[RMDB]
RNA sequence: GGGAACGACUCGAGUAGAGUCGAAAACGCAACCAGAUGAGCUCGCUCGCGAAGGUGCUGCAUCAGCAGGCGAUCGACGUUGGCGGCGACAGCGACGUCGACAUCCUCGCGGUCGUCGCGCAGGGCAAUGGUGAGGGUAGUUCGCUACCCUCACCAUAAAAGAAACAACAACAACAAC
Reactivity to 2A3 in 0.01 (KOAc 150mM, MgCl2 10mM, bicine 150mM(pH8.5), 24C), signal-to-noise 1, nucleotides 027 to 126: c090g000c040a020a090c020c010a080g060a270u120g020a060g030c010u000c050g060c000u040c000g040c030g000a060a030g110g000u040g020c000u000g000c000a170u170c070a090g050c000a000g060g000c050g060a070u020c000g020a060c010g060u110u110g220g020c020g020g030c010g060a050c000a060g030c010g020a030c000g040u010c010g040a050c000a090u110c010c000u010c010g000c010g000g000u030c000g000u060c010g000c040g000c030a030g010g040g000c000a030
Reactivity to DMS in 0.01 (KOAc 150mM, MgCl2 10mM, bicine 150mM(pH8.5), 24C), signal-to-noise 2, nucleotides 027 to 126: c050g010c100a090a070c040c010a140g000a130u010g000a090g030c050u010c030g000c020u010c090g020c020g000a060a110g020g000u010g000c040u000g000c060a180u020c160a160g020c040a020g010g010c110g010a080u000c040g030a050c030g000u000u000g030g020c050g000g010c070g010a020c090a070g000c010g000a020c060g010u010c050g010a070c100a050u000c030c050u000c020g010c010g020g000u010c000g000u010c060g030c070g010c100a140g000g010g000c140a140
Source: RMDB library OK2TRN, as collected in RNAgym. The record gives the reactivity of an RNA of 177 nucleotides to 2A3 and DMS. The reactions ran in a buffer of 150 mM KOAc, 10 mM MgCl2 and 150 mM bicine (pH 8.5), at 24 C. For DMS, 1,759 sequencing reads were counted.